[RMDB]
RNA sequence: GGGAACGACUCGAGUAGAGUCGAAAAAGAAAUAAAGGAGAGUUUUAUCUAUCUGUAGGAGGAUGGAUUGCAGAAUACCUCCAUGCGAGAAAUUUCCUUACUAUACUGGGGAAUCCAGAAAAUAAAGGUAUACGAAGUUUUUCGAAACUUCGUAUACAAAAGAAACAACAACAACAAC
Reactivity to DMS in 0.01 (KOAc 150mM, MgCl2 10mM, bicine 150mM(pH8.5), 24C), signal-to-noise 1, nucleotides 027 to 126: a070g000a130a100a090u020a060a080a080g010g000a010g010a140g000u000u030u020u020a070u010c020u030a010u010c000u000g010u000a190g000g000a080g000g000a070u000g000g010a050u000u000g010c150a090g000a080a060u000a050c010c010u000c020c020a060u000g000c110g000a090g010a040a090a060u000u000u000c000c000u000u000a130c180u000a110u000a130c000u010g010g000g020g010a170a120u010c020c000a000g000a120a080a090a080u000a040a090a030g010